[RMDB]
RNA sequence: GGGAACGACUCGAGUAGAGUCGAAAAAAGAAGGCAAGGAAUUGGUAGAAAAGAGCGAGCCUCCCGAUACGAGUUUGCCAGGACCUAUCAAGUUUGGAGUCAUCCGGCCCGUAGGGGAGAAUAGAACAAGGAUCCGUGUUCGCACGGAUCAAAAGAAACAACAACAACAAC
Reactivity to 2A3 in 0.01 (KOAc 150mM, MgCl2 10mM, bicine 150mM(pH8.5), 24C), signal-to-noise 3, nucleotides 027 to 129: a000a000g050a000a000g010g010c010a000a020g030g000a030a090u130u090g050g060u190a010g070a060a120a030a000g040a030g030c050g000a040g010c000c000u030c000c000c000g010a040u050a100c070g000a070g040u050u090u040g060c040c000a010g000g000a030c010c010u030a030u070c060a040a030g010u010u090u080g060g000a020g010u030c000a050u020c010c010g000g000c000c000c000g020u030a030g030g020g000g000a050g000a000a020u110a030g040a010a000c040a020a050g130
Reactivity to DMS in 0.01 (KOAc 150mM, MgCl2 10mM, bicine 150mM(pH8.5), 24C), signal-to-noise 3, nucleotides 027 to 129: a050a050g010a080a030g000g040c080a000a000g020g000a000a000u050u000g020g000u030a060g010a120a040a080a090g000a080g000c140g020a080g030c090c040u020c020c040c020g030a060u020a100c110g020a050g020u040u090u030g010c000c030a000g000g000a080c100c010u000a070u040c120a040a080g020u010u030u080g020g010a070g020u060c110a090u000c000c040g010g040c070c080c040g030u030a050g000g000g000g000a060g080a060a080u020a090g000a000a000c180a080a070g040